RNA sequence: GGGAACGACUCGAGUAGAGUCGAAAAUCAGUUCCGCUGGGAAGGACCCGAACCUGCCACGGGAGCUUGCCUGAAGCGCGCACGGGCAAGCGAGGAUCGUGAUGGUUCGCCUUCCUGUGCUGAAGCGCGCACGGCAACCGAAAGGUGCGAAGCCGCCCUAUUACAAUGCCUUCGGGCAUUGUAAUAGAAAAGAAACAACAACAACAAC
Reactivity to 2A3 in 0.01 (KOAc 150mM, MgCl2 10mM, bicine 150mM(pH8.5), 24C), signal-to-noise 3, nucleotides 027 to 156: u140c020a010g050u100u060c040c030g010c040u050g000g020g010a000a000g020g020a040c130c250c070g000a020a000c010c010u120g120c060c010a010c010g000g000g000a010g000c000u010u010g000c010c000u080g040a150a070g010c000g020c000g000c000a010c010g020g000g000c000a010a000g030c000g010a220g020g000a000u000c010g000u000g000a020u030g000g000u010u000c010g040c000c000u000u010c000c000u010g000u010g000c000u030g020a110a040g000c000g000c010g000c010a000c000g000g000c020a020a030c030c000g100a110a040a060g020g000u020g010c040g060a070a030g070c060c040g050c020c010
Reactivity to DMS in 0.01 (KOAc 150mM, MgCl2 10mM, bicine 150mM(pH8.5), 24C), signal-to-noise 2, nucleotides 027 to 156: u000c050a100g010u010u000c010c020g030c040u000g010g000g010a030a020g010g000a270c080c300c270g000a040a020c020c000u000g000c060c030a030c010g000g080g000a070g040c010u000u010g050c000c000u010g000a050a050g020c020g040c000g010c000a300c020g000g010g000c010a020a000g000c030g020a070g010g000a010u000c010g020u010g000a150u000g020g030u000u000c010g000c010c000u000u000c000c000u000g010u000g000c020u000g020a050a050g020c000g000c030g040c000a300c010g010g060c010a040a060c020c030g000a080a120a110g020g020u010g050c020g000a020a050g020c000c010g030c040c050